[RMDB]
RNA sequence: GGGAACGACUCGAGUAGAGUCGAAAAUUCGUCUAGAGGUUUCAAUGUGUCUAUACAAAUUGAACACUGGGCGGUACACCGCUCCCAGUUGGAUGAUAACACUUAGGUAGGGGACACUCCUCUGGGAGCUCAUCGAUAUGUUCGCAUAUCGAUGAGCAAAAGAAACAACAACAACAAC
Reactivity to 2A3 in 0.01 (KOAc 150mM, MgCl2 10mM, bicine 150mM(pH8.5), 24C), signal-to-noise 1, nucleotides 027 to 126: u020u000c000g000u010c000u010a010g020a160g130g000u090u120u190c030a000a000u050g030u030g020u000c060u210a140u040a220c010a040a180a070u080u050g000a020a000c010a000c000u020g000g000g020c000g000g000u010a070c100a040c060c010g000c020u000c000c010c000a030g060u160u070g070g000a030u050g020a060u070a180a070c090a030c110u120u090a060g260g000u050a020g000g150g030g000a000c000a000c000u000c010c000u030c000u000g020g010g000a010
Reactivity to DMS in 0.01 (KOAc 150mM, MgCl2 10mM, bicine 150mM(pH8.5), 24C), signal-to-noise 2, nucleotides 027 to 126: u010u000c010g020u000c010u000a000g030a090g040g010u010u000u000c030a010a030u000g010u000g000u010c300u000a160u000a040c000a050a050a020u000u000g010a040a020c040a080c020u000g010g010g000c030g000g000u010a070c200a150c060c030g000c060u010c000c000c000a000g030u000u010g010g000a030u000g010a150u000a130a140c090a050c070u000u010a040g010g010u030a040g040g000g000g000a150c190a080c130u000c000c000u000c000u000g010g000g000a030